An RNA of 177 nucleotides, treated with 2A3 and DMS and read out base by base. The DMS profile rests on 948 reads. The reactions ran in a buffer of 150 mM KOAc, 10 mM MgCl2 and 150 mM bicine (pH 8.5), at 24 C. DMS adducts were read by reverse transcription with MarathonRT.

RNA sequence: GGGAACGACUCGAGUAGAGUCGAAAAGAUAUGGAUUCAGGCUUGGACCGACCUCGUCGGAAACGACGAAGUCGCUAGCCUGAUCCUAAGUCAAACAAGUGACAAAUCUUCGGAUUUGUCACUUGAAUCCCAUAGCUCUCUUCGGAGAGCUAUGGGAAAAAGAAACAACAACAACAAC
Reactivity to 2A3 in 0.01 (KOAc 150mM, MgCl2 10mM, bicine 150mM(pH8.5), 24C), signal-to-noise 1, nucleotides 027 to 126: g000a010u010a000u050g000g030a020u190u210c010a000g000g000c070u300u280g120g140a300c090c020g010a000c000c000u030c000g010u000c000g020g050a000a000a030c000g000a000c000g000a000a000g000u000c000g040c150u000a000g000c000c000u020g010a000u020c000c010u010a010a010g010u000c000a030a110a120c000a040a070g010u000g010a000c020a010a020a010u000c020u060u190c300g010g000a010u030u010u010g000u000c000a010c000u000u000g000a000a000
Reactivity to DMS in 0.01 (KOAc 150mM, MgCl2 10mM, bicine 150mM(pH8.5), 24C), signal-to-noise 1, nucleotides 027 to 126: g020a040u000a130u010g000g000a000u000u010c020a020g020g030c010u000u030g020g010a140c300c040g000a010c000c040u010c010g060u010c000g010g000a040a020a050c010g010a000c000g010a000a010g010u010c000g020c010u030a020g010c000c010u010g030a020u000c000c010u000a010a060g010u000c030a210a120a250c010a000a010g010u010g000a010c000a000a010a000u000c000u000u020c150g010g000a000u000u000u000g000u000c000a000c000u010u000g020a120a150